RNA sequence: GGGAACGACUCGAGUAGAGUCGAAAACUGGCUGCAGGCCCCUAUAAACUGUCUAAAGAAGGACCCUGUAAUUGUAGAGGUUGUGUAUGAUGGGAACUCUGAAAAUGCAAACUGGUAUACUUUGUGGCUAUGUAUGUCACUUCGGUGACAUACAUAGAAAAGAAACAACAACAACAAC
Reactivity to 2A3 in 0.01 (KOAc 150mM, MgCl2 10mM, bicine 150mM(pH8.5), 24C), signal-to-noise 4, nucleotides 027 to 126: c010u010g050g030c020u060g000c030a060g100g000c000c000c000c000u080a060u110a140a110a020c040u030g120u040c080u100a150a080a040g040a030a060g080g030a040c060c000c000u070g070u160a080a120u110u070g050u040a040g030a040g070g030u050u060g010u070g000u040a070u110g110a060u040g000g010g050a060a040c000u020c010u050g030a050a030a060a000u110g020c030a050a000a090c030u020g000g040u050a040u060a130c040u050u090u060g110u050g080g000
Reactivity to DMS in 0.01 (KOAc 150mM, MgCl2 10mM, bicine 150mM(pH8.5), 24C), signal-to-noise 4, nucleotides 027 to 126: c050u000g010g010c040u010g000c060a070g000g000c030c000c040c030u010a180u020a080a060a080c070u010g010u000c060u010a040a090a100g010a130a120g000g010a080c040c060c020u010g000u020a060a060u000u000g010u010a040g000a100g010g000u010u000g030u000g010u000a040u020g000a040u000g000g000g010a050a070c030u010c040u000g000a040a050a060a100u030g020c050a040a070a080c040u020g000g020u010a040u010a100c070u010u010u030g020u020g010g020
The data come from the RNA Mapping Database (RMDB), library OK1LIB. An RNA of 177 nucleotides, treated with 2A3 and DMS and read out base by base. The DMS profile rests on 7,992 reads.